Conditions: 150 mM KOAc, 10 mM MgCl2 and 150 mM bicine (pH 8.5), 24 C.
Structure probing data (2A3 and DMS) for a 207-nucleotide construct.
For DMS, 3,078 sequencing reads were counted.
For 2A3, 3,022 sequencing reads were counted.
For 2A3 the reverse transcriptase was SuperScript II with manganese.
Source: RMDB library OK3TST, as collected in RNAgym.
RNA sequence: GGGAACGACUCGAGUAGAGUCGAAAAGUCUGCACGGCGGCCGACGCUGACGCGAGCGCGUUUCCACUCAAUACGCCCGUGCUGCUGACGAACGUCGUCGCCGCGCUCGGCAAGGCCGGCAAGAAAGGCACGCUGCGCCGCACGCUCGACGCGAUCGAGCUGUAAGAUGUUUCGACAUCUUACAGCUAAAAGAAACAACAACAACAAC
Reactivity to 2A3 in 0.01 (KOAc 150mM, MgCl2 10mM, bicine 150mM(pH8.5), 24C), signal-to-noise 4, nucleotides 027 to 156: g010u010c050u100g060c070a060c130g020g000c020g030g000c030c050g010a030c020g000c060u110g060a100c060g020c030g080a090g040c170g000c020g020u000u060u060c040c010a050c050u160c040a060a120u120a200c070g040c020c020c020g020u040g020c050u030g000c030u070g040a080c070g030a130a040c040g070u120c020g010u030c010g070c050c040g000c020g000c050u020c010g000g000c030a040a020g020g010c010c010g040g000c040a070a060g140a150a100a030g130g020c080a030c090g050c000u050g030c030g000c040c010g010c010a030c050g010c000u030c010g070a040c030g020c020g040a050u100c030g040
Reactivity to DMS in 0.01 (KOAc 150mM, MgCl2 10mM, bicine 150mM(pH8.5), 24C), signal-to-noise 1, nucleotides 027 to 156: g050u000c040u000g090c070a130c050g020g010c000g000g050c060c020g030a080c010g040c000u000g000a050c030g010c020g000a030g010c000g000c050g000u000u000u000c030c090a210c210u010c100a080a100u010a010c060g030c030c030c010g000u010g020c010u000g050c030u000g040a060c040g000a070a110c100g040u010c020g010u000c010g030c060c020g020c020g030c050u000c000g000g000c020a120a260g050g000c000c060g000g000c030a120a070g010a090a200a070g000g020c020a080c040g020c020u030g030c180g030c030c010g020c070a120c060g000c020u010c000g000a020c000g020c010g020a120u000c040g010